The record gives the reactivity of an RNA of 177 nucleotides to 2A3 and DMS.
It was measured as part of the RMDB library OK2TST.
The DMS profile rests on 4,937 reads.
For 2A3 the reverse transcriptase was SuperScript II with manganese.
As a SHAPE reagent, 2A3 marks flexible, mostly unpaired nucleotides at the ribose 2'-OH.
RNA sequence: GGGAACGACUCGAGUAGAGUCGAAAACGCUUGUGACAGCCCAGACUGUUUUUCAGACAUUGCUAAAUGUCUCCUGGGAAGAAAACCAUUGCUGAUAUGGAAUUGCUGCCUUAAGAAGAAAAUCCUACAUAAGCUGUCUAUUCGUAGACAGCUUAUGAAAAGAAACAACAACAACAAC
Reactivity to 2A3 in 0.01 (KOAc 150mM, MgCl2 10mM, bicine 150mM(pH8.5), 24C), signal-to-noise 3, nucleotides 027 to 126: c020g020c020u070u070g060u040g050a040c000a010g000c000c000c000a010g050a060c070u060g180u120u160u080u110u230c060a010g000a020c000a020u020u120g040c070u200a260a070a040u010g000u000c000u050c020c000u030g000g030g010a060a030g070a040a050a000a020c000c000a030u000u100g020c100u120g080a080u050a020u170g050g040a040a050u070u050g000c010u010g000c040c000u030u060a020a050g010a030a000g040a040a160a010a030u060c020c020u050a030
Reactivity to DMS in 0.01 (KOAc 150mM, MgCl2 10mM, bicine 150mM(pH8.5), 24C), signal-to-noise 5, nucleotides 027 to 126: c230g010c050u000u000g010u010g020a060c060a100g000c020c040c020a050g000a180c140u010g000u010u000u000u010u020c130a050g010a020c010a010u000u010g020c210u010a070a040a010u000g000u000c010u010c120c000u000g010g010g010a100a100g000a060a080a080a170c030c010a020u000u000g010c160u000g010a090u010a050u000g000g010a100a130u000u000g010c020u000g010c010c010u000u000a040a060g010a090a070g010a070a080a080a100u000c010c010u000a140